[RMDB]
RNA sequence: GGGAACGACUCGAGUAGAGUCGAAAAUGAUCGUAUCGACGAUAUUCACCUUCUUGCUGGCGGGCCUUUCGAGGUCCGUUUUCUCAGGUCAUUGAGCUUUUUGUGCCGUUUCGGUCUCGGAACGGGCAGAGGCUCAUGUUUUCGAACAUGAGCCUCUAAAAGAAACAACAACAACAAC
Reactivity to DMS in 0.01 (KOAc 150mM, MgCl2 10mM, bicine 150mM(pH8.5), 24C), signal-to-noise 1, nucleotides 027 to 126: u070g020a050u020c050g000u040a170u030c120g010a020c090g010a030u000a100u020u000c010a160c050c040u040u000c130u010u040g050c160u000g000g010c000g000g010g000c030c050u000u000u010c190g010a020g000g000u000c000c000g000u010u050u000u000c090u000c040a030g000g000u000c070a100u030u030g010a000g040c110u000u000u000u000u000g010u000g020c040c000g000u000u000u000c000g010g050u020c260u020c010g000g000a010a010c010g010g020g050c020
Reactivity to 2A3 in 0.01 (KOAc 150mM, MgCl2 10mM, bicine 150mM(pH8.5), 24C), signal-to-noise 2, nucleotides 027 to 126: u080g010a000u000c020g060u070a080u250c160g060a040c010g000a050u000a050u100u060c030a090c000c000u070u080c030u050u180g050c040u000g010g000c000g000g030g030c020c000u080u140u060c130g060a000g000g000u000c000c000g010u030u040u030u000c000u000c000a000g000g100u050c000a030u010u040g000a030g020c060u050u000u020u140u170g070u090g160c000c020g030u020u000u000c030g130g150u100c300u170c100g000g000a000a030c020g000g010g000c000